[RMDB]
RNA sequence: GGGAACGACUCGAGUAGAGUCGAAAAUCGACCUGCUGCAGUUCGACGUGGCUGCGACCAUGAAAAUCCUGCCGCGCAUCAGCCAGCCGACCAUCACCGAGCCUGAGGCCGCCAGCAUGGACCCGGCUGACCUGCUCGCCUGCGGCCAGGUGAUCGCGGCACUCCCAAUUUUCGAAUUGGGAGUGCCAAAAGAAACAACAACAACAAC
Reactivity to 2A3 in 0.01 (KOAc 150mM, MgCl2 10mM, bicine 150mM(pH8.5), 24C), signal-to-noise 1, nucleotides 027 to 156: u050c010g070a030c030c050u010g000c000u070g000c020a050g010u110u130c020g100a050c000g050u060g000g040c030u010g020c010g030a030c040c110a200u300g120a070a060a000a000u020c000c000u000g000c000c000g030c000g020c030a080u080c000a090g000c060c050a000g010c030c000g030a070c000c000a000u020c000a020c140c010g070a090g040c020c030u100g150a170g050g000c020c000g090c000c020a010g030c010a010u000g010g010a090c070c010c010g000g000c000u000g000a000c000c000u010g010c050u030c130g000c010c050u060g000c000g010g030c060c000a000g020g000u000g030a000u020c050g040c070